The record gives the reactivity of an RNA of 177 nucleotides to 2A3 and DMS. For 2A3 the reverse transcriptase was SuperScript II with manganese. For 2A3, 921 sequencing reads were counted. Reactivities are given for positions 27 through 126. Conditions: 150 mM KOAc, 10 mM MgCl2 and 150 mM bicine (pH 8.5), 24 C. It was measured as part of the RMDB library OK2TST.
RNA sequence: GGGAACGACUCGAGUAGAGUCGAAAAGAAAGGCGCUGUCGAAUGUGGUGAGUAAGAUGACUGAGAGUAGUGCUAAUGAAGGAUUCGAUGCUGGCAAUGCCAGUGUAACAUCUGGCCUUGCUCAACCAUUAGGACAAACCUUCGGGUUUGUCCUAAUAAAAGAAACAACAACAACAAC
Reactivity to 2A3 in 0.01 (KOAc 150mM, MgCl2 10mM, bicine 150mM(pH8.5), 24C), signal-to-noise 1, nucleotides 027 to 126: g050a080a160a020g060g000c090g000c120u020g090u170c060g020a040a050u130g010u030g080g000u020g000a060g060u040a060a030g050a160u130g030a000c030u090g040a010g020a000g170u110a000g000u000g080c030u030a040a040u170g020a050a010g110g010a030u040u040c050g010a020u080g000c090u070g010g010c000a020a010u010g010c010c000a000g030u000g010u020a000a000c000a010u030c000u010g000g040c040c000u000u020g030c000u020c010a000a010c010c030
Reactivity to DMS in 0.01 (KOAc 150mM, MgCl2 10mM, bicine 150mM(pH8.5), 24C), signal-to-noise 2, nucleotides 027 to 126: g000a070a160a140g010g010c030g000c040u010g000u010c050g000a060a060u000g020u000g000g020u000g010a120g040u000a080a070g010a090u020g000a090c050u010g000a080g000a100g030u010a050g040u010g020c080u000a080a080u010g010a070a060g030g000a140u010u000c080g010a080u000g010c060u020g010g000c000a030a040u010g010c000c000a020g030u000g000u000a150a140c170a090u000c010u010g000g000c000c100u000u000g000c000u000c110a020a060c090c110